An RNA of 177 nucleotides, treated with 2A3 and read out base by base.
[RMDB]
RNA sequence: GGGAACGACUCGAGUAGAGUCGAAAAGGCACGCCGGCGAAGGCGUCGGGAACCCGGUCUGGGGUGACGGUGUCCUCGAUGGCCUCGAAUCCUUCGGCGCGCACCCUGAUCGAGGUCAGCGCCGGGCACGACGCUGGCAGUUCGCUGCCAGCGUCGUAAAAGAAACAACAACAACAAC
Reactivity to 2A3 in 0.01 (KOAc 150mM, MgCl2 10mM, bicine 150mM(pH8.5), 24C), signal-to-noise 2, nucleotides 027 to 126: g030g010c070a010c050g010c020c000g030g060c080g060a140a050g010g000c020g000u030c000g020g000g150a020a020c000c020c000g000g080u250c280u300g000g150g000g000u130g020a020c060g000g030u100g010u100c000c000u000c070g060a060u020g220g010c000c030u030c030g050a100a090u020c000c050u070u170c080g040g000c040g000c000g000c050a080c010c000c000u060g030a090u150c070g060a020g070g000u000c020a010g010c000g020c000c000g000g000g000c060

Source: RMDB library OK1LIB, as collected in RNAgym.